[RMDB]
RNA sequence: GGGAACGACUCGAGUAGAGUCGAAAAGCCUGUGCCGCUCUGAGCCUUCCUAGGUGUGGCCUGGCACAUAAUGAGGCAGAUGCAUUCCCAGGCAGGUAGCAGCUACUGAGAACAGCCAAGGCGUGUAGCCUCUUAGUGAGUUCGCUCACUAAGAGGCAAAAGAAACAACAACAACAAC
Reactivity to DMS in 0.01 (KOAc 150mM, MgCl2 10mM, bicine 150mM(pH8.5), 24C), signal-to-noise 4, nucleotides 027 to 126: g020c020c020u000g020u000g030c000c040g000c050u010c070u000g010a180g010c040c040u000u000c070c100u000a160g000g010u000g010u010g000g010c020c000u000g020g010c030a050c080a050u010a080a100u000g010a070g010g020c020a050g010a090u000g000c090a200u000u000c040c010c010a150g020g040c030a050g000g010u000a040g010c090a070g010c040u000a070c030u010g010a080g000a070a110c080a090g020c060c060a060a080g000g010c030g010u000g020u000a160
Reactivity to 2A3 in 0.01 (KOAc 150mM, MgCl2 10mM, bicine 150mM(pH8.5), 24C), signal-to-noise 3, nucleotides 027 to 126: g020c000c000u030g080u110g030c000c000g050c030u080c040u100g050a060g030c000c010u070u110c090c030u070a050g060g030u070g040u050g060g000c000c030u020g040g160c030a000c000a030u300a120a120u190g040a080g010g060c020a000g000a080u120g030c010a070u020u040c000c030c000a000g030g030c020a010g030g040u080a030g030c020a010g020c010u040a040c030u070g040a040g020a120a020c010a010g030c020c020a050a040g040g000c020g000u090g020u050a020
Chemical mapping of a 177-nucleotide RNA with DMS and 2A3. For DMS, 3,595 sequencing reads were counted. For 2A3, 3,733 sequencing reads were counted. Conditions: 150 mM KOAc, 10 mM MgCl2 and 150 mM bicine (pH 8.5), 24 C. The data come from the RNA Mapping Database (RMDB), library OK2TRN.